The record gives the reactivity of an RNA of 177 nucleotides to 2A3. The RNA was probed in 150 mM KOAc, 10 mM MgCl2 and 150 mM bicine (pH 8.5) at 24 C. Reactivities are rounded to 0.1 and cut off at 0 and 3. For 2A3, 593 sequencing reads were counted.
[RMDB]
RNA sequence: GGGAACGACUCGAGUAGAGUCGAAAAUCCUCCUAUGCCUUCUUUCUCCAACUGUGUGGUCUUUCUUCUGAAACAAAGAAGAAAUAGCCAAAUCAGAAUUGCCCUCUUGGAAUUGUGGUCCAGAUUUGUAAUUCCUUUCGUUCGCGAAAGGAAUUACAAAAGAAACAACAACAACAAC
Reactivity to 2A3 in 0.01 (KOAc 150mM, MgCl2 10mM, bicine 150mM(pH8.5), 24C), signal-to-noise 1, nucleotides 027 to 126: u070c020c010u100c020c000u070a050u100g010c010c020u030u010c000u020u090u050c010u030c000c050a090a130c040u010g000u010g020u020g030g000u000c040u030u000u000c000u000u010c000u000g130a110a170a180c120a010a230a120g060a000a000g000a000a010a000u050a000g010c000c000a090a030a000u070c000a040g120a120a130u030u120g000c000c020c020u100c000u000u040g020g080a080a050u150u060g000u020g040g010u000c000c000a040g040a150u000u000u000